This 207-nucleotide RNA was probed chemically with 2A3. The data come from the RNA Mapping Database (RMDB), library RNAMAK. Conditions: 150 mM KOAc, 10 mM MgCl2 and 150 mM bicine (pH 8.5), 24 C.

[RMDB]
RNA sequence: GGGAACGACUCGAGUAGAGUCGAAAACGCUGGGUGUAUGGAUAAAUCUAGUGGAGGGAGCUGAAGCGCGCACGGCAUCGAUCUCCCUAGGAAUACAUACACCUGUGCUGAAGCGCGCACGGCAACCGAAAGGUGCGACUAACUGCUUUCGAGCAGUUGCAUCACAUUGUUUCGACAAUGUGAUGCAAAAAGAAACAACAACAACAAC
Reactivity to 2A3 in 0.01 (KOAc 150mM, MgCl2 10mM, bicine 150mM(pH8.5), 24C), signal-to-noise 1, nucleotides 027 to 156: c020g010c000u020g000g000g010u040g020u010a000u000g060g040a080u100a260a220a060u150c020u010a030g000u180g270g000a000g070g000g000a030g000c000u040g010a160a020g000c000g010c000g020c000a040c020g020g000c000a020u300c060g000a010u020c000u040c000c090c040u000a000g000g030a040a120u120a160c000a030u000a010c000a000c000c000u000g010u050g000c000u090g050a070a020g000c000g000c010g000c000a010c000g060g020c030a110a220c060c000g060a110a000a020g000g000u010g050c010g000a000c050u100a040a030c010u010g030c000u080u140u120c200g070a010g000c000a000g020u000